[RMDB]
RNA sequence: GGGAACGACUCGAGUAGAGUCGAAAAGCUGCGUGAGGGGUUGUAAAUGGCGCUGCGAUCCACGUCUUGUCGCAAAUGAACAAGAGAUUGAUCACGUAGCGUCGCGGUUGGCCCUUCCGGCCGCGGGUCAUGGUACGCUCUUCGGGGCGUGCCAUGAAAAAGAAACAACAACAACAAC
Reactivity to 2A3 in 0.01 (KOAc 150mM, MgCl2 10mM, bicine 150mM(pH8.5), 24C), signal-to-noise 9, nucleotides 027 to 126: g010c000u010g000c000g020u060g010a010g000g010g010g010u010u030g090u100a040a070a070u110g030g000c020g000c010u000g000c000g010a000u000c010c030a030c020g250u000c000u000u000g000u000c020g030c180a080a130a290u270g030a070a010c000a000a000g020a010g020a150u030u130g020a020u040c040a010c180g010u010a000g000c000g000u000c000g000c010g030g030u030u030g010g000c000c000c000u050u020c000c000g020g000c010c010g000c010g010g010g020
Reactivity to DMS in 0.01 (KOAc 150mM, MgCl2 10mM, bicine 150mM(pH8.5), 24C), signal-to-noise 9, nucleotides 027 to 126: g010c010u010g000c030g020u020g000a030g000g010g000g010u000u000g010u020a050a210a160u020g000g010c010g010c010u000g020c000g000a060u000c020c220a110c230g010u000c000u000u000g010u000c040g010c300a090a110a120u040g010a100a020c010a010a000g000a050g000a140u030u010g000a060u000c080a100c080g020u000a010g010c000g020u010c000g010c040g000g000u010u020g000g000c040c010c020u010u000c000c070g010g010c050c030g010c020g000g000g010